[RMDB]
RNA sequence: GGGAACGACUCGAGUAGAGUCGAAAAGUCCCCACUUUCGAGUGGGGACAAUCAAAGUUUUCGCACUCGCAGCCCGCAGCGUUGGUGCUCCCACGCGGUGCAUAACUGCCUACUUCGGUAGGCAGAAGGUAAUGUAUCCGUUCGCGGAUACAUUACCAAAAGAAACAACAACAACAAC
Reactivity to DMS in 0.01 (KOAc 150mM, MgCl2 10mM, bicine 150mM(pH8.5), 24C), signal-to-noise 2, nucleotides 027 to 126: g000u000c010c010c000c000a030c000u000u000u010c140g010a020g050u010g020g010g010g010a000c000a000a040u010c140a100a120a120g000u000u000u000u020c050g020c060a050c030u000c020g030c070a090g000c070c010c040g010c040a090g010c040g010u000u000g030g020u010g000c100u000c040c000c060a140c080g000c040g000g030u000g000c020a110u020a050a140c020u000g010c010c000u000a010c000u000u000c150g030g000u000a000g000g010c000a000g000a030a030
Reactivity to 2A3 in 0.01 (KOAc 150mM, MgCl2 10mM, bicine 150mM(pH8.5), 24C), signal-to-noise 3, nucleotides 027 to 126: g010u000c000c000c000c010a000c030u060u110u090c230g110a020g000u000g020g000g000g010a000c000a000a010u100c010a010a050a060g030u030u030u070u140c060g000c020a010c020u110c040g030c030a030g050c000c000c020g000c060a060g030c030g030u100u130g050g010u120g040c030u080c020c010c000a050c040g000c030g040g020u050g010c000a020u090a180a120c000u010g010c010c000u010a020c010u010u060c190g120g000u010a000g000g000c000a000g000a000a010